[RMDB]
RNA sequence: GGGAACGACUCGAGUAGAGUCGAAAACGAUCCUCGAGAGAGGAUCGACGAGUCUUCGGACUCGAUUACCGCGCAGAUGUGCCGCGGGGCUACGAUGGUAUUGUGGGAAAGAAUACCAUUGUACCUUCUUGUCGUAGCCGAACAACUAGCACGUCGAAGUAAUUUACUACUUCGGUAGUAAAUUACUAAAAGAAACAACAACAACAAC
Reactivity to 2A3 in 0.01 (KOAc 150mM, MgCl2 10mM, bicine 150mM(pH8.5), 24C), signal-to-noise 9, nucleotides 027 to 156: c010g000a000u000c000c000u010c000g040a050g000a010g000a000g040g000a000u000c000g000a010c000g000a000g000u000c010u040u140c250g080g000a000c000u000c000g000a030u090u200a080c000c000g000c000g000c020a070g000a010u010g000u000g000c010c000g010c010g030g050g000g000c000u000a000c000g010a010u100g000g000u000a010u010u040g010u030g010g020g060a090a220a140g120a130a070u080a110c000c000a000u000u020g000u000a000c000c000u160u210c110u150u290g030u020c010g000u000a000g000c010c000g010a040a020c040a020a070c060u100a010g000c000a000c000g000u000c010g020a030
Reactivity to DMS in 0.01 (KOAc 150mM, MgCl2 10mM, bicine 150mM(pH8.5), 24C), signal-to-noise 4, nucleotides 027 to 156: c060g010a020u000c000c000u000c000g010a300g010a300g010a010g000g010a000u000c040g010a070c030g010a020g010u000c000u000u000c300g050g000a020c010u000c000g010a080u000u000a250c030c010g020c050g040c070a090g000a030u000g000u000g030c020c010g020c030g000g010g020g020c000u000a010c000g020a050u000g010g020u010a010u000u000g030u000g020g000g010a160a090a220g000a210a140u010a120c010c000a020u000u000g010u000a000c020c030u000u020c110u010u010g000u000c010g020u000a020g030c010c010g020a080a070c110a050a110c120u000a080g000c010a010c020g020u000c010g010a190